Overview: An RNA of 177 nucleotides, treated with DMS and 2A3 and read out base by base. The RNA was probed in 150 mM KOAc, 10 mM MgCl2 and 150 mM bicine (pH 8.5) at 24 C.
[RMDB]
RNA sequence: GGGAACGACUCGAGUAGAGUCGAAAAAUUUAACAGAGCGUAAGAAGAACUGACAUUUCUCUGGACGGAGUCGAAAACCAUUAUCCUGGAGGUGUUGUAGAACUGAAUAUGUUCUGGAAUGCAGUUCCCUAGGGAGUAGCUUCGGCUACUCCCUAGGAAAAGAAACAACAACAACAAC
Reactivity to DMS in 0.01 (KOAc 150mM, MgCl2 10mM, bicine 150mM(pH8.5), 24C), signal-to-noise 2, nucleotides 027 to 126: a090u040u030u010a060a080c040a020g010a020g000c030g040u000a070a030g000a300a050g010a030a300c010u000g000a040c050a030u000u000u010c010u010c060u000g020g000a030c180g000g000a040g020u000c140g000a050a070a080a120c010c030a090u020u060a280u010c010c000u020g000g000a020g010g030u000g030u000u010g000u010a050g000a010a140c000u010g000a150a130u000a000u000g030u020u010c020u000g000g000a080a090u000g010c190a030g020u000u000c070
Reactivity to 2A3 in 0.01 (KOAc 150mM, MgCl2 10mM, bicine 150mM(pH8.5), 24C), signal-to-noise 2, nucleotides 027 to 126: a000u080u080u060a010a030c020a000g000a020g040c020g030u030a060a050g000a050a000g010a070a000c020u000g020a000c000a010u060u040u000c140u030c100u090g050g000a020c000g030g030a040g010u160c180g200a090a070a000a020c000c000a020u170u210a060u090c010c130u060g010g020a000g020g000u100g030u050u010g170u170a010g000a050a000c000u010g000a010a070u040a000u000g010u000u000c000u050g000g010a040a010u140g000c000a000g150u050u040c000

It was measured as part of the RMDB library OK1LIB. 2A3 adducts were read by reverse transcription with SuperScript II with manganese.